[RMDB]
RNA sequence: GGGAACGACUCGAGUAGAGUCGAAAACGGCGGUCCUUGGACUAACAGCCCCAAAAACGGCCAGUAGUUUUCUUGGCUGAUUUGCUGUUGGCAUGGGGGCGUCUCAUAGCUGGGAGGUCCGUAUUGGCGAUAAAUAUAUUUUCGAAUAUAUUUAUCGAAAAGAAACAACAACAACAAC
Reactivity to DMS in 0.01 (KOAc 150mM, MgCl2 10mM, bicine 150mM(pH8.5), 24C), signal-to-noise 6, nucleotides 027 to 126: c130g000g000c080g010g000u010c010c020u010u000g020g000a110c030u010a060a150c070a080g010c030c140c060c090a060a050a040a090a110c060g010g010c000c010a030g010u010a090g000u010u030u020u010c020u020u020g010g000c030u010g010a140u010u010u010g000c010u010g000u000u000g010g000c050a080u020g010g000g000g000g010c010g000u010c030u000c050a040u020a090g010c140u010g000g010g000a070g000g000u000c010c020g020u010a060u020u010g010g020
Reactivity to 2A3 in 0.01 (KOAc 150mM, MgCl2 10mM, bicine 150mM(pH8.5), 24C), signal-to-noise 5, nucleotides 027 to 126: c010g010g000c010g020g100u030c010c000u020u070g090g030a090c000u000a030a000c010a010g000c010c000c010c030a050a090a030a010a020c020g010g000c000c000a010g010u070a030g000u020u020u150u060c050u070u070g080g000c060u030g040a130u040u030u110g000c000u000g000u070u020g000g000c010a030u040g030g000g000g010g000c000g030u000c000u000c020a040u050a030g020c030u040g040g030g000a030g030g040u030c010c010g020u050a120u080u230g100g010
About this RNA:
An RNA of 177 nucleotides, treated with DMS and 2A3 and read out base by base. It was measured as part of the RMDB library OK1LIB. The RNA was probed in 150 mM KOAc, 10 mM MgCl2 and 150 mM bicine (pH 8.5) at 24 C.